[RMDB]
RNA sequence: GGGAACGACUCGAGUAGAGUCGAAAACGUUGACCUUCGGGUCAACGAAAAAAGAUAUGGAGGAUGUUGUCGGGAGAAGCUAGGUCGGAAACGACCUAGACUUCGAGGAUCGACACCAUCCUCCUAAGUCAAAAACCGAUCGAUUCGUCGAUCGGAACUGUAAAAAGUAGUUCGCUACUUUUUACAGAAAAGAAACAACAACAACAAC
Reactivity to 2A3 in 0.01 (KOAc 150mM, MgCl2 10mM, bicine 150mM(pH8.5), 24C), signal-to-noise 2, nucleotides 027 to 156: c010g000u000u000g000a010c010c000u040u050c300g090g000g000u000c010a000a000c010g000a040a000a000a000a000a000g060a030u070a020u090g000g000a000g000g000a000u000g010u030u010g010u010c020g000g010g000a070g000a000a000g010c000u010a000g000g000u010c000g010g020a040a060a050c010g000a000c000c000u010a010g020a120c000u000u000c000g020a040g000g000a030u050c000g000a000c000a010c000c000a010u010c000c000u000c000c000u000a000a000g000u010c000a010a010a000a110a160c020c000g000a000u000c000g010a020u040u060c230g030u010c000g150a000u010c000g000g010a020a030
Reactivity to DMS in 0.01 (KOAc 150mM, MgCl2 10mM, bicine 150mM(pH8.5), 24C), signal-to-noise 2, nucleotides 027 to 156: c020g040u010u000g000a030c000c000u030u010c300g110g020g010u000c000a010a010c000g020a000a040a100a060a050a120g010a100u000a250u000g010g010a070g040g020a040u000g020u010u010g010u010c000g000g000g010a140g000a030a000g000c000u000a000g000g020u000c010g030g000a090a130a170c020g040a000c000c000u000a000g000a040c010u010u010c000g010a080g020g020a070u000c000g000a040c020a020c030c000a040u000c000c010u000c010c000u010a000a030g010u010c050a090a080a070a060a140c000c010g000a010u010c010g020a070u000u010c300g000u000c000g000a010u000c000g010g000a000a010

Source information: The record gives the reactivity of an RNA of 207 nucleotides to 2A3 and DMS. The DMS profile rests on 4,945 reads. For 2A3 the reverse transcriptase was SuperScript II with manganese. DMS adducts were read by reverse transcription with MarathonRT. Values cover nucleotides 27 to 156. The 2A3 profile rests on 5,237 reads.